This 177-nucleotide RNA was probed chemically with 2A3 and DMS. For DMS the reverse transcriptase was MarathonRT. 2A3 adducts were read by reverse transcription with SuperScript II with manganese. The reactions ran in a buffer of 150 mM KOAc, 10 mM MgCl2 and 150 mM bicine (pH 8.5), at 24 C. The DMS profile rests on 31,550 reads. Values cover nucleotides 27 to 126.

RNA sequence: GGGAACGACUCGAGUAGAGUCGAAAAGGCGACAAGUUCGCUUGUCGCCACGGGGUCCAGCCUGGAAAGGCUGGAGGUAUUGGAAUGGUCGGGCCGCCUUUCAACGCGGGACAUUCGUGUCCCGCAAAUUCAUCAUAUGAUUCGUCAUAUGAUGAAUAAAAGAAACAACAACAACAAC
Reactivity to 2A3 in 0.01 (KOAc 150mM, MgCl2 10mM, bicine 150mM(pH8.5), 24C), signal-to-noise 6, nucleotides 027 to 126: g010g000c000g000a000c000a010a000g010u030u060c160g070c130u000u000g000u000c000g000c000c000a000c020g020g000g000g010u010c000c000a000g010c000c000u060g110g110a200a110a020g010g000c000u010g010g040a000g020g000u120a140u110u210g050g020a020a030u160g010g010u020c020g010g000g000c000c000g000c000c000u020u030u020c040a060a020c090g000c000g000g000g000a000c010a010u030u060c200g050u020g000u010c010c000c000g000c000a000a010
Reactivity to DMS in 0.01 (KOAc 150mM, MgCl2 10mM, bicine 150mM(pH8.5), 24C), signal-to-noise 9, nucleotides 027 to 126: g010g010c000g010a010c000a010a010g010u000u010c220g010c000u000u000g010u000c000g010c000c000a020c150g000g000g010g000u000c000c000a010g010c000c000u000g010g030a110a150a020g010g010c000u000g010g000a000g000g000u010a090u010u000g000g000a030a020u010g020g010u000c010g000g000g000c010c010g000c010c010u000u000u000c020a070a140c260g010c000g010g000g010a020c000a030u000u010c160g010u000g010u000c000c000c000g010c010a000a020